[RMDB]
RNA sequence: GGGAACGACUCGAGUAGAGUCGAAAAAGAGGAGAGCAUCUCUUCCUAUUCCUCAGCAAGAAAAUCUUUCCCAGGCUGGACGUGGUGGCUCAUGCUUGUAAUCCCAGCACUUUGGUAGGCCGAGGCGGGUGGAUCACGAGGUUAGGAGAACGAGACACGUUUUAAUUAUGUUCGCAUAAUUAAAACGAAAAGAAACAACAACAACAAC
Reactivity to DMS in 0.01 (KOAc 150mM, MgCl2 10mM, bicine 150mM(pH8.5), 24C), signal-to-noise 2, nucleotides 027 to 156: a090g010a050g030g010a050g000a160g030c110a110u000c010u010c000u000u000c020c020u000a150u000u000c010c010u010c020a160g010c110a150a120g010a080a030a060a100u000c020u010u000u000c000c000c000a230g040g000c030u000g010g010a060c080g030u010g010g010u000g010g000c050u010c050a020u010g010c020u000u020g020u000a050a080u000c030c010c030a150g020c010a060c070u010u000u000g000g020u000a050g030g000c040c030g010a100g010g000c050g020g020g050u010g020g020a050u010c060a000c040g020a030g020g010u010u000a060g010g000a070g000a060a100c040g010a100g010a120c070a150
Reactivity to 2A3 in 0.01 (KOAc 150mM, MgCl2 10mM, bicine 150mM(pH8.5), 24C), signal-to-noise 3, nucleotides 027 to 156: a000g070a040g000g020a030g010a020g080c060a140u060c010u010c010u070u040c000c020u050a100u090u110c010c010u040c030a020g020c060a060a090g050a130a160a070a080u040c040u040u070u030c010c000c000a000g030g000c010u040g020g040a050c040g050u060g000g000u030g030g010c010u000c060a040u080g000c000u060u080g020u150a090a080u020c010c000c000a010g030c010a010c020u090u070u070g080g010u110a040g020g040c030c030g000a030g010g030c030g010g030g000u050g030g020a060u070c030a010c100g030a030g000g040u030u020a000g020g000a030g010a030a010c080g030a000g010a060c030a000